[RMDB]
Description: Conditions: 150 mM KOAc, 10 mM MgCl2 and 150 mM bicine (pH 8.5), 24 C. An RNA of 177 nucleotides, treated with 2A3 and DMS and read out base by base. 2A3 adducts were read by reverse transcription with SuperScript II with manganese. Reactivities are given for positions 27 through 126. The data come from the RNA Mapping Database (RMDB), library OK2TST.
RNA sequence: GGGAACGACUCGAGUAGAGUCGAAAACCUCGAGGGACCUAGCAUAGUUCCAAAUUAGUCCACUACGUGGCGCUAGUGUACGUAAACACUUCCGGUUUACUGGUAUUGAAGGAUAUCUCGGAACCUAAGCUAAAAUCGGAUUCGUCCGAUUUUAGCUAAAAGAAACAACAACAACAAC
Reactivity to 2A3 in 0.01 (KOAc 150mM, MgCl2 10mM, bicine 150mM(pH8.5), 24C), signal-to-noise 3, nucleotides 027 to 126: c010c020u020c020g020a090g030g020g020a020c000c020u030a030g060c030a120u060a160g080u060u060c000c000a010a090a030u110u060a040g010u010c010c000a010c040u260a100c250g040u020g020g010c060g010c020u010a010g010u020g050u100a070c040g030u070a030a000a010c060a030c060u130u020c070c070g030g010u010u040u070a120c050u030g030g000u040a060u050u090g050a080a000g050g000a030u010a030u070c040u020c040g050g000a040a050c030c030u030a060
Reactivity to DMS in 0.01 (KOAc 150mM, MgCl2 10mM, bicine 150mM(pH8.5), 24C), signal-to-noise 3, nucleotides 027 to 126: c030c010u020c080g030a140g000g020g000a140c040c020u000a090g000c100a120u010a170g010u010u020c010c030a090a080a100u010u010a060g010u000c010c030a030c030u010a120c200g020u010g000g010c140g000c010u000a000g000u010g010u000a110c070g000u000a050a010a000c030a040c110u000u010c110c140g020g000u000u000u000a020c040u000g010g010u000a040u000u010g000a160a060g000g010a050u020a140u000c000u000c090g000g010a050a120c080c060u020a080